[RMDB]
RNA sequence: GGGAACGACUCGAGUAGAGUCGAAAACUGCCGCGACCAGGGCGCCGACCUGGCGUUCACCUACGUGGGCGACCGCUUCAAGGAACGCAUCACCGAAUUCGCCGCCUCGUUCGGCAGCGACAUCGUAACCCAUGAUGGGGUUCGCCCCAUCAUGGGUAAAAGAAACAACAACAACAAC
Reactivity to 2A3 in 0.01 (KOAc 150mM, MgCl2 10mM, bicine 150mM(pH8.5), 24C), signal-to-noise 1, nucleotides 027 to 126: c010u010g030c020c010g020c040g000a040c030c060a060g000g070g000c030g020c020c020g010a110c000c210u060g140g000c020g000u060u020c040a300c050c010u030a030c030g030u030g040g000g000c010g040a080c010c000g000c030u050u100c090a030a000g030g010a040a010c030g080c030a140u130c090a040c060c080g010a010a130u100u040c000g000c050c000g020c010c000u070c060g000u140u030c030g010g030c010a000g010c000g000a030c010a100u140c060g110u060a080
Reactivity to DMS in 0.01 (KOAc 150mM, MgCl2 10mM, bicine 150mM(pH8.5), 24C), signal-to-noise 1, nucleotides 027 to 126: c010u000g000c040c040g010c110g000a100c040c130a080g000g040g000c030g040c300c010g000a100c220c060u020g000g000c020g010u000u030c030a150c070c010u000a130c300g000u000g030g000g000c110g010a030c000c020g000c060u000u040c300a160a000g020g000a000a030c050g020c040a100u000c000a130c180c080g000a030a100u000u000c010g000c250c010g010c010c000u000c290g010u000u000c120g010g000c030a020g000c010g000a050c140a060u010c070g010u010a100